[RMDB]
RNA sequence: GGGAACGACUCGAGUAGAGUCGAAAAGAUAUGGAUACACGGGAGCUGUGGUUCGGAAACGAACCGUCAGCAUCGAUCGUGACGUCCUAAGUCAAAAGAGCUAAACUUCUUCGGAAGUUUAGCUCAACUUCGUGUCCUACUUCGGUAGGACACGAAGAAAAGAAACAACAACAACAAC
Reactivity to DMS in 0.01 (KOAc 150mM, MgCl2 10mM, bicine 150mM(pH8.5), 24C), signal-to-noise 1, nucleotides 027 to 126: g000a000u000a000u010g000g000a010u010a120c000a010c000g010g000g010a010g100c000u000g000u010g010g010u010u030c000g020g000a030a000a050c000g020a020a000c000c000g020u030c000a000g030c010a300u040c170g000a190u030c020g000u000g000a090c100g040u020c000c000u000a040a100g000u010c000a070a080a060a130g030a010g010c000u010a020a020a020c000u000u000c000u020u030c170g000g010a010a040g010u000u000u000a010g020c000u000c030a000a000